[RMDB]
RNA sequence: GGGAACGACUCGAGUAGAGUCGAAAAGACGCUGUACAACAUCACGCCAGGCCCGGCGAUGUUCACCGAACAGCCGGAUAUCGUCUGGGGACUCAUCGCUGCGCUGCUGAUUGCGAACGUGAUGCUGCGACCGUGCGGUGUUCGCACCGCACGGUCGAAAAGAAACAACAACAACAAC
Reactivity to 2A3 in 0.01 (KOAc 150mM, MgCl2 10mM, bicine 150mM(pH8.5), 24C), signal-to-noise 1, nucleotides 027 to 126: g060a000c030g120c090u090g000u190a130c010a080a040c030a040u080c000a010c000g060c000c000a000g070g000c000c000c000g000g000c000g020a000u040g000u030u010c060a060c300c160g110a010a080c030a050g020c000c000g000g040a080u070a110u220c030g000u000c000u070g050g030g000g060a010c030u040c000a040u060c060g000c000u110g060c060g000c000u000g000c060u180g060a240u170u000g160c110g060a170a070c000g080u000g000a010u030g000c050u050g000